Structure probing data (2A3) for a 207-nucleotide construct. The 2A3 profile rests on 955 reads.
RNA sequence: GGGAACGACUCGAGUAGAGUCGAAAAGAUUCGUCAGCCGCAUGCCCAGGUGGCCGCUAUCUUCAAGGCUACGGCGCGGAUAGGUCCGCGCUGAUCGUUUUCCUCCAACGACGCUAUGGCGUCUUUCAAAAUCGGCAUCGGUUCGCCGAUGCCGAAACAACUGUGUAUCGUUCGCGAUACACAGUUGAAAAGAAACAACAACAACAAC
Reactivity to 2A3 in 0.01 (KOAc 150mM, MgCl2 10mM, bicine 150mM(pH8.5), 24C), signal-to-noise 2, nucleotides 027 to 156: g020a020u140u160c090g080u100c130a030g010c000c000g020c020a040u200g060c010c000c000a010g080g000u010g020g020c000c020g030c030u080a080u030c050u050u060c050a070a100g030g020c020u020a010c020g010g000c000g000c020g010g000a020u160a110g200g000u040c000c000g020c020g010c000u010g030a080u030c010g010u040u020u030u100c000c030u080c070c010a060a120c040g020a000c000g050c010u140a150u210g190g000c030g020u040c030u000u170u060c050a080a050a040a050u030c000g000g000c000a020u000c010g040g000u070u080c150g020c030c000g000a000u020g030c030c000g000a000a000a000